About this RNA: Chemical mapping of a 177-nucleotide RNA with DMS and 2A3. The RNA was probed in 150 mM KOAc, 10 mM MgCl2 and 150 mM bicine (pH 8.5) at 24 C.
RNA sequence: GGGAACGACUCGAGUAGAGUCGAAAAACAUAAUUCCAGUGACUCGUCAGUAAAACGGAGGGCUUGCUCAUAGUCCUCCACGUUGAACAAAACAAUGCUCAGCGCGUCGAGAAUACCGGCCAGUCGGCCGCAUUUUACCAUUCGUGGUAAAAUGCGGAAAAGAAACAACAACAACAAC
Reactivity to DMS in 0.01 (KOAc 150mM, MgCl2 10mM, bicine 150mM(pH8.5), 24C), signal-to-noise 6, nucleotides 027 to 126: a070c150a100u010a080a130u000u000c010c010a110g020u000g010a160c010u000c150g000u010c020a080g010u000a020a040a050a060c120g030g010a020g000g010g010c000u000u010g020c200u010c210a050u010a010g030u000c010c000u010c010c000a000c040g030u000u010g010a020a010c020a040a060a100a130c300a120a090u000g000c020u000c010a010g010c010g020c050g010u000c050g000a060g010a100a130u000a040c060c030g010g010c060c020a050g030u000c100g010g000
Reactivity to 2A3 in 0.01 (KOAc 150mM, MgCl2 10mM, bicine 150mM(pH8.5), 24C), signal-to-noise 6, nucleotides 027 to 126: a000c040a040u240a100a100u130u030c010c010a030g070u020g140a030c000u000c020g020u030c020a070g010u090a040a070a080a040c090g000g000a000g010g010g000c020u030u070g050c030u070c220a090u130a050g010u010c000c000u000c000c000a000c000g000u000u020g010a020a000c010a010a070a030a030c050a110a140u060g010c010u010c020a010g000c010g020c020g080u090c030g010a030g020a070a010u030a050c020c010g010g030c030c030a030g090u090c050g050g030
Record summary
Source: RMDB library OK2TST, as collected in RNAgym. The DMS profile rests on 5,061 reads.